[RMDB]
RNA sequence: GGGAACGACUCGAGUAGAGUCGAAAAGAAAGAAAGAAAGAAGCCGGCUCUGCUAGUUUCACGGCAACCACGUUGAAAUUACAACGAAAGAAGCUCGCAUUCAACUUCAACGGCUUAACGAGUGCAAAAAAGAAGUAUCACUUCGGUGAUACUUCAACAUUAAUCCUAUGUUCGCAUAGGAUUAAUGAAAAGAAACAACAACAACAAC
Reactivity to DMS in 0.01 (KOAc 150mM, MgCl2 10mM, bicine 150mM(pH8.5), 24C), signal-to-noise 1, nucleotides 027 to 156: g000a160a120a100g000a250a090a140g000a240a160a250g010a150a200g010c000c000g100g000c020u000c020u010g000c030u000a020g000u010u000u030c040a030c010g050g000c040a080a110c050c070a130c040g000u000u000g020a070a040a100u000u000a150c050a110a060c010g010a020a080a190g020a120a160g050c040u010c130g020c040a150u000u000c080a020a100c020u000u000c000a030a080c030g000g020c010u010u000a090a040c050g000a040g040u000g000c050a020a020a050a140a030a170g020a000a050g040u000a010u000c000a000c000u000u000c300g020g010u000g000a040u000a000c010u010u000c000a000a070
Reactivity to 2A3 in 0.01 (KOAc 150mM, MgCl2 10mM, bicine 150mM(pH8.5), 24C), signal-to-noise 2, nucleotides 027 to 156: g040a010a090a000g050a060a110a000g040a050a150a010g080a070a000g110c110c020g030g000c030u030c020u040g030c030u030a040g040u040u070u060c090a060c040g030g000c060a040a100c020c020a030c030g000u020u030g060a100a120a110u200u110a090c010a030a010c030g040a070a010a130g020a010a020g000c070u150c160g020c030a020u090u040c030a040a040c000u020u030c010a060a030c040g020g000c000u050u030a020a010c040g020a010g010u020g000c000a000a170a000a000a000a000g000a000a000g000u000a000u000c000a000c010u020u020c170g070g010u000g000a000u000a000c010u000u000c000a000a000